RNA sequence: GGGAACGACUCGAGUAGAGUCGAAAAAAUGGAACGUGGCAGUGAGACAGUGGGGGAUAAGCUUCAUUGUCGAGAGGGAAACAACCCAGAUCAGCAGCUAAGGUGCCUAAAUAACGCUCAGUGGAAACGAGUGAGUUCUUUUCGAAGAACUCACUCGAAAAGAAACAACAACAACAAC
Reactivity to DMS in 0.01 (KOAc 150mM, MgCl2 10mM, bicine 150mM(pH8.5), 24C), signal-to-noise 2, nucleotides 027 to 126: a130a020u020g010g000a040a010c090g030u040g000g000c010a010g060u000g010a050g000a080c000a020g030u000g010g000g000g000g020a090u020a040a150g070c000u000u000c020a040u000u000g000u000c020g050a120g000a120g000g000g020a090a060a040c260a120a140c000c000c000a080g000a150u040c110a110g000c060a020g000c060u070a130a090g000g030u000g000c010c010u020a040a040a020u050a020a030c130g000c060u020c020a060g060u010g030g010a080a010a070
Reactivity to 2A3 in 0.01 (KOAc 150mM, MgCl2 10mM, bicine 150mM(pH8.5), 24C), signal-to-noise 2, nucleotides 027 to 126: a000a000u280g030g000a090a030c020g000u010g070g000c030a070g070u000g000a060g000a070c000a010g000u030g000g020g000g000g030a110u050a300a000g080c000u010u030c050a020u050u070g000u020c020g000a000g050a020g060g090g010a090a170a000c050a000a070c030c030c010a050g010a070u040c000a000g020c010a000g000c000u000a000a040g010g010u080g000c000c000u090a220a110a050u140a110a000c020g010c000u030c000a050g000u060g040g050a070a060a070